[RMDB]
RNA sequence: GGGAACGACUCGAGUAGAGUCGAAAACACAUGCCAUCAUAUCGGUUAAGAACUCUUAACUCUGAUGGCUUUCGAGUUAUGUGGUGCAUUGAAGCUGUCCCUUCAAUUCAACGUACCGUUCCGUCAAUCAGCCGUAGUAAUUCGUUACUACGGCUGAAAAAGAAACAACAACAACAAC
Reactivity to 2A3 in 0.01 (KOAc 150mM, MgCl2 10mM, bicine 150mM(pH8.5), 24C), signal-to-noise 3, nucleotides 027 to 126: c060a000c000a050u100g010c030c000a000u000c010a000u090a050u240c100g040g020u030u010a020a000g070a300a260c060u040c000u300u000a010a010c000u000c030u110g000a000u000g010g000c000u010u000u000c010g000a000g000u040u040a090u220g130u170g070g050u040g000c000a010u040u000g020a010a000g080c160u120g110u170c030c000c040u010u040c020a020a030u030u010c000a000a030c010g020u020a000c000c020g000u010u010c020c010g110u110c090a000a080
Reactivity to DMS in 0.01 (KOAc 150mM, MgCl2 10mM, bicine 150mM(pH8.5), 24C), signal-to-noise 4, nucleotides 027 to 126: c140a100c160a080u000g010c000c000a010u000c000a020u010a130u000c300g010g010u010u000a000a010g010a270a150c300u010c000u000u000a010a000c000u000c090u000g010a030u000g000g000c010u000u000u000c060g010a050g000u010u000a070u000g020u010g000g010u000g010c020a030u000u000g010a020a030g000c140u000g000u000c080c060c030u000u010c040a030a070u000u000c020a020a030c050g020u000a010c020c010g000u000u000c000c000g000u010c080a060a100